[RMDB]
RNA sequence: GGGAACGACUCGAGUAGAGUCGAAAAGGGAUAAGAGAGUACUCUUAUCCCCACGUCGUUGGUGACAACGACGAUUAUUACGUACGCAUACGCCGGGCGUACGCUUACUCCACUCAACUCCUUCGGGACUUGUUUGGAGGAAGAUAUCACGGCUAAAGUACCUGGAUUAGUUCGCUAAUCCAGGUACAAAAGAAACAACAACAACAAC
Reactivity to 2A3 in 0.01 (KOAc 150mM, MgCl2 10mM, bicine 150mM(pH8.5), 24C), signal-to-noise 3, nucleotides 027 to 156: g000g000g000a000u000a000a010g010a010g030a060g190u220a220c010u000c000u000u000a000u010c000c000c000c000a030c000g010u010c000g000u000u010g020g040u060g020a030c000a000a000c000g000a000c000g000a000u050u060a090u100u180a060c000g000u000a010c000g040c020a030u050a120c110g000c000c000g000g010g020c010g000u000a000c000g000c000u010u040a010c000u000c000c000a000c000u010c000a010a010c010u020c000c000u010u050c190g040g000g010a010c010u000u010g010u000u000u010g000g010a010g000g000a010a000g030a000u100a030u210c140a110c030g000g000c000u000a000a000a060